[RMDB]
Annotation:
An RNA of 177 nucleotides, treated with 2A3 and DMS and read out base by base. For DMS, 22,387 sequencing reads were counted. For 2A3, 28,447 sequencing reads were counted.
RNA sequence: GGGAACGACUCGAGUAGAGUCGAAAAGACGAUGGCUAGAAUCUGUACAGUCAGAUUAGCUGUGUAGAAGACACAAGGCGACUUGUGUUACGCAUAGAGUAAAUCUGGCUCUGUGCCGACGUCGCCACUACAGCUAACUAUUCGUAGUUAGCUGUAGAAAAGAAACAACAACAACAAC
Reactivity to 2A3 in 0.01 (KOAc 150mM, MgCl2 10mM, bicine 150mM(pH8.5), 24C), signal-to-noise 7, nucleotides 027 to 126: g030a000c040g040a030u030g000g000c020u030a020g070a060a090u060c040u070g070u070a050c010a020g010u000c000a000g000a000u010u010a010g000c000u000g000u000g000u020a100g050a300a010g020a020c010a000c000a010a000g010g000c020g020a050c020u000u010g000u000g010u010u020a020c060g000c000a000u000a010g050a010g130u090a040a050a040u020c010u010g010g000c020u000c010u030g050u050g000c000c000g000a010c010g000u020c020g000c000c000a020
Reactivity to DMS in 0.01 (KOAc 150mM, MgCl2 10mM, bicine 150mM(pH8.5), 24C), signal-to-noise 9, nucleotides 027 to 126: g010a040c040g010a110u010g000g010c020u000a070g010a130a140u010c130u000g010u010a080c210a050g010u000c020a010g000a020u000u000a080g000c000u000g020u000g010u000a050g020a140a060g010a010c000a000c000a010a010g000g010c300g000a180c010u000u000g000u000g000u000u000a100c130g000c000a010u000a000g010a040g000u000a050a030a030u000c020u000g010g000c020u000c050u000g010u000g000c000c020g010a040c020g010u000c030g000c010c010a150